The record gives the reactivity of an RNA of 177 nucleotides to 2A3 and DMS.

[RMDB]
RNA sequence: GGGAACGACUCGAGUAGAGUCGAAAAUCACUUUGCCAGUUGGACUUAUGUCUUUAUUGGUCAUUCAAGUGGGGCAAAGGAAAUAUCCUUUUAAAACUCAGGCAAACUGGGUGUUUGUCUGUAUCCUAAUACUUGAAUGAUUCGUCAUUCAAGUAUUAAAAGAAACAACAACAACAAC
Reactivity to 2A3 in 0.01 (KOAc 150mM, MgCl2 10mM, bicine 150mM(pH8.5), 24C), signal-to-noise 9, nucleotides 027 to 126: u050c000a020c040u020u010u020g000c000c010a110g020u080u080g090g050a020c010u110u110a050u180g030u020c000u040u230u050a180u090u160g030g010u040c030a040u110u140c080a040a010g030u050g030g080g020g020c020a010a010a000g030g040a020a070a010u130a040u030c010c000u030u080u040u120a070a120a020a010c050u040c020a000g010g000c010a020a020a030c030u130g270g190g120u180g050u010u010u000g000u000c000u000g020u020a070u020c000c010u020
Reactivity to DMS in 0.01 (KOAc 150mM, MgCl2 10mM, bicine 150mM(pH8.5), 24C), signal-to-noise 9, nucleotides 027 to 126: u010c050a110c010u000u000u000g010c010c010a080g010u010u010g010g010a020c010u010u020a080u020g010u000c020u000u010u030a080u020u010g010g010u010c130a060u020u020c170a020a020g030u010g010g010g010g020c100a020a020a010g000g000a050a240a090u020a080u000c000c000u000u010u010u020a030a060a110a140c180u010c000a000g000g000c030a010a020a020c000u000g030g010g020u020g010u000u000u000g010u000c020u000g010u000a050u010c070c060u010
Description
Values cover nucleotides 27 to 126. The reactions ran in a buffer of 150 mM KOAc, 10 mM MgCl2 and 150 mM bicine (pH 8.5), at 24 C. For 2A3 the reverse transcriptase was SuperScript II with manganese.